[RMDB]
RNA sequence: GGGAACGACUCGAGUAGAGUCGAAAAGCUCACCUGUAAAUGGGGGUUGCAGCAGCACUUACCUUCUGGGACUCCUGCAGCUUGAAGGGGCAGCACACACCACAUGCUGAGAAGGCGCCUAACUCAGCACUCUAACUUGAUUCGUCAAGUUAGAGUGAAAAGAAACAACAACAACAAC
Reactivity to DMS in 0.01 (KOAc 150mM, MgCl2 10mM, bicine 150mM(pH8.5), 24C), signal-to-noise 7, nucleotides 027 to 126: g010c020u010c060a150c070c020u000g010u010a060a090a100u010g010g000g010g000g020u000u000g020c030a050g020c090a040g020c080a080c120u010u010a100c070c020u000u000c040u010g000g000g000a090c050u000c060c020u000g010c060a070g000c040u000u000g010a140a080g010g010g010g020c050a050g000c040a060c070a060c060a080c030c040a080c120a080u010g020c010u000g000a040g020a090a100g010g010c090g010c020c020u000a050a120c030u000c030a060g010
Reactivity to 2A3 in 0.01 (KOAc 150mM, MgCl2 10mM, bicine 150mM(pH8.5), 24C), signal-to-noise 5, nucleotides 027 to 126: g020c010u010c030a090c010c030u080g090u220a030a150a260u230g020g000g000g020g020u030u060g040c010a020g020c000a000g000c020a010c080u080u130a100c020c000u080u060c040u080g040g000g060a050c020u000c000c040u040g020c020a040g010c030u040u120g060a060a040g030g000g000g000c010a010g030c000a030c000a010c000a030c040c020a040c020a080u100g020c010u020g010a010g030a100a040g070g010c020g020c010c010u020a070a030c010u010c050a010g040